[RMDB]
RNA sequence: GGGAACGACUCGAGUAGAGUCGAAAAGGGUUUUGGUUCGCCAAAACCCAAAAUAAAAUGUACGAAAGGCAACGUACGCCAAAAAGAUCGAAAGAUCAAAAAAAACUCAUUCCUUCGGGAAUGAGAACGAAUAUCUUAACUUCGGUUAAGAUAUUCGAAAAGAAACAACAACAACAAC
Reactivity to 2A3 in 0.01 (KOAc 150mM, MgCl2 10mM, bicine 150mM(pH8.5), 24C), signal-to-noise 2, nucleotides 027 to 126: g010g000g010u010u010u010u010g030g020u010u060c170g070c010c000a000a000a000a000c010c020c000a020a000a000a010u020a000a020a000a010u110g010u000a000c020g100a270a040a090g240g020c070a070a020c020g030u010a010c030g000c010c020a000a150a080a030a030g000a010u020c000g050a060a010a010g010a000u000c000a050a000a010a000a000a010a010a040c000u010c000a000u000u000c010c000u030u070c210g100g010g010a000a000u000g000a000g000a020a000
Reactivity to DMS in 0.01 (KOAc 150mM, MgCl2 10mM, bicine 150mM(pH8.5), 24C), signal-to-noise 2, nucleotides 027 to 126: g010g000g030u000u000u010u000g000g000u000u000c210g040c010c000a010a000a010a010c000c000c000a000a020a010a060u010a130a100a070a060u010g020u000a000c000g000a090a130a180g010g010c240a030a050c020g000u000a000c020g020c070c050a020a100a070a180a060g020a010u000c000g030a120a080a120g020a010u020c010a020a000a010a080a070a020a100a100c000u030c000a000u000u000c000c000u000u000c280g020g010g000a010a000u000g000a000g000a010a100